RNA sequence: GGGAACGACUCGAGUAGAGUCGAAAACUGCAGGUCAACGGGACGUCUUCAGAUCAGCUAUUGCAGAAGAAAGGUCAGCCAAGCGCUCUGGGCCCGUCCGACUGUAUAUAGGAGCUUCUGAUUUCAACCAGAAGCUAACUCUCUCCGAAACAAUGAGACGAUUUAGCAUCUUCGGAUGCUAAAUCGUAAAAGAAACAACAACAACAAC
Reactivity to 2A3 in 0.01 (KOAc 150mM, MgCl2 10mM, bicine 150mM(pH8.5), 24C), signal-to-noise 1, nucleotides 027 to 156: c040u050g030c030a000g050g060u020c020a010a000c020g090g000g050a030c010g200u050c080u150u100c010a000g000a090u030c050a020g000c030u150a120u300u230g000c050a000g060a220a000g050a090a230a070g050g070u140c140a000g000c070c000a030a000g020c010g000c030u040c000u000g000g000g000c000c000c000g000u000c000c030g030a000c010u000g020u040a050u000a000u030a110g100g000a000g020c000u030u000c000u000g080a140u180u180u260c050a080a040c020c010a010g000a000a000g010c000u040a100a040c000u000c000u000c000u000c020c070g020a090a170a060c010a090a090u190g000a000g000